Chemical mapping of a 177-nucleotide RNA with 2A3 and DMS. It was measured as part of the RMDB library M2PK90. Conditions: 150 mM KOAc, 10 mM MgCl2 and 150 mM bicine (pH 8.5), 24 C. 2A3 adducts were read by reverse transcription with SuperScript II with manganese.
[RMDB]
RNA sequence: GGGAACGACUCGAGUAGAGUCGAAAAGCAUUGGGAAAGUUAAUCAAAAGUGCAUCAUAACUUUCCCUAAACGAAAUCAAAAUCGUUAUGAUGCACUUUUGACAUCGAUUAAGAUGAAUAGACACAAGUCAUUAAUACCCUUCGGGGUAUUAAUGACAAAAGAAACAACAACAACAAC
Reactivity to 2A3 in 0.01 (KOAc 150mM, MgCl2 10mM, bicine 150mM(pH8.5), 24C), signal-to-noise 1, nucleotides 027 to 126: g010c020a050u160u250g050g000g110a110a070a090g120u060u100a070a080u030c010a000a010a000a000g020u000g000c000a000u000c000a010u000a020a000c040u030u060u110c020c000c000u030a030a000a000c020g110a090a000a020u170c050a040a060a000a220u100c080g000u000u000a000u000g010a000u000g010c030a000c010u040u000u040u010g010a010c000a010u010c010g050a100u120u210a130a130g020a030u020g020a000a010u100a080g070a010c020a010c010a170a000
Reactivity to DMS in 0.01 (KOAc 150mM, MgCl2 10mM, bicine 150mM(pH8.5), 24C), signal-to-noise 2, nucleotides 027 to 126: g020c120a060u000u000g000g020g000a050a050a160g000u000u010a080a120u010c000a000a000a010a000g040u000g000c000a010u000c000a000u000a010a010c060u000u010u000c000c030c010u000a020a050a080c190g020a030a060a060u010c140a040a050a100a070u020c100g000u000u000a030u000g000a000u010g000c000a000c000u000u000u000u000g000a030c050a010u000c000g000a150u000u010a060a140g010a000u000g010a100a040u000a070g010a130c080a030c150a030a130